[RMDB]
RNA sequence: GGGAACGACUCGAGUAGAGUCGAAAAGUCGGGCAUGCUGCACGCAGCAUAGAGCUCAAACUGAAAUUUAUAGACCAGCGCAAUGUCGGUACGCCGAUCGCCAGCAGCGCGAGCCGUUUUCAGUUUUUCCGACGUCUUGCGUAACGCGUCUGCAAUCGAUUUAACAGACGUUCGCGUCUGUUAAAUCAAAAGAAACAACAACAACAAC
Reactivity to DMS in 0.01 (KOAc 150mM, MgCl2 10mM, bicine 150mM(pH8.5), 24C), signal-to-noise 2, nucleotides 027 to 156: g000u000c030g030g020g090c020a110u000g040c030u060g000c030a160c150g040c010a090g050c040a090u000a090g000a140g020c050u010c090a080a040a060c020u000g020a080a100a140u000u000u010a120u000a140g010a020c000c000a200g000c010g070c040a100a040u000g000u000c050g020g000u010a030c120g010c090c060g000a070u000c030g030c050c070a120g030c040a210g010c020g030c090g020a010g030c000c010g010u000u060u000u000c030a120g000u000u000u000u000u010c000c020g030a040c000g020u000c070u000u000g030c010g030u000a100a160c090g000c040g020u020c000u020g000c080a050a150u020c090
Reactivity to 2A3 in 0.01 (KOAc 150mM, MgCl2 10mM, bicine 150mM(pH8.5), 24C), signal-to-noise 4, nucleotides 027 to 156: g100u080c060g000g010g000c010a020u020g000c000u000g000c060a070c300g030c020a000g010c010a020u040a050g230a020g000c020u020c030a050a050a060c030u060g070a030a060a110u230u290u100a210u190a050g030a000c020c030a020g000c000g000c020a010a030u040g010u000c000g000g000u040a030c050g050c070c040g060a060u020c010g000c040c000a120g100c050a020g020c070g010c040g070a000g030c050c030g030u060u000u050u130c050a050g000u020u020u020u160u030c000c010g000a000c000g020u020c030u010u030g030c010g010u070a210a070c060g010c050g020u020c020u040g000c070a020a110u160c120